[RMDB]
RNA sequence: GGGAACGACUCGAGUAGAGUCGAAAAACAUAUUCCGAUAUGAUUCAGAUGGUGUCUUACUGGUUCGUACCAAGGGACAUAAUGGUUUCUUGUUUCCAACCAAAGAACAAGUGGCGAGCCUGAAUAAAAAACUGACUGCCGUUCGCGGCAGUCAGAACCAGCAUAGCAUGUUCGCAUGCUAUGCUGGAAAAGAAACAACAACAACAAC
Reactivity to 2A3 in 0.01 (KOAc 150mM, MgCl2 10mM, bicine 150mM(pH8.5), 24C), signal-to-noise 1, nucleotides 027 to 156: a000c050a140u120a080u020u050c020c030g070a030u070a050u160g040a040u110u160c070a070g070a140u100g010g090u040g030u040c030u030u100a130c070u120g010g040u030u070c080g020u130a010c010c000a050a000g020g000g020a000c030a020u120a060a130u100g090g000u040u000u000c020u000u030g020u000u070u000c000c040a080a100c040c020a000a130a060g010a060a000c010a010a020g010u030g060g030c020g000a010g030c000c030u010g040a010a070u140a100a090a030a010a040a080c000u000g010a000c000u000g040c030c000g030u010u070c140g000c000g100g000c010a000g000u000c000a000g000a000a000